The record gives the reactivity of an RNA of 207 nucleotides to 2A3 and DMS. The DMS profile rests on 23,897 reads. For 2A3 the reverse transcriptase was SuperScript II with manganese. Source: RMDB library RNAMAK, as collected in RNAgym. For DMS the reverse transcriptase was MarathonRT.
RNA sequence: GGGAACGACUCGAGUAGAGUCGAAAAGGAUAUUCGUAUCCGUCGCUUCCUAAGUCGACAUCGAUCUAUACGAUACUAUAUUGUCAGUCGGAAACGACUUGGAUUUAUAUAGAUAAGUAUAGGGAGUCGAUAUGGAUUUGUGGCCAUUCGUGGCCAAACAUAGUAGUUAUUUCGAUAACUACUAUGUAAAAGAAACAACAACAACAAC
Reactivity to 2A3 in 0.01 (KOAc 150mM, MgCl2 10mM, bicine 150mM(pH8.5), 24C), signal-to-noise 9, nucleotides 027 to 156: g010g000a010u040a020u070u230c260g020u050a000u070c010c010g050u050c080g050c110u050u010c010c000u040a150a050g020u000c000g010a010c040a230u160c060g060a080u030c020u000a000u000a000c010g010a020u030a300c000u000a000u000a010u010u010g010u010c000a010g000u000c000g050g010a080a070a070c000g000a000c000u040u110g060g000a020u160u300u020a010u010a000u000a000g020a040u050a080a030g000u000a000u000a000g000g010g000a010g000u000c000g000a000u010a070u100g050g010a020u050u070u300g100u120g020g010c010c000a030u050u090c260g120u080g010g010c010c000a010a010
Reactivity to DMS in 0.01 (KOAc 150mM, MgCl2 10mM, bicine 150mM(pH8.5), 24C), signal-to-noise 6, nucleotides 027 to 156: g010g010a010u000a020u000u000c220g040u000a030u010c000c010g010u000c050g010c070u000u000c000c010u010a080a220g010u000c000g010a030c020a160u000c100g020a050u010c010u000a020u000a020c010g010a260u010a120c010u000a020u000a010u010u000g010u000c010a070g000u000c000g010g010a180a140a300c010g020a020c000u000u010g030g010a040u000u000u000a010u000a020u000a020g010a090u000a090a300g000u000a030u000a030g010g000g020a160g030u000c000g020a030u000a090u000g010g010a120u010u000u000g020u000g020g030c000c010a100u000u000c240g010u000g020g000c000c000a010a110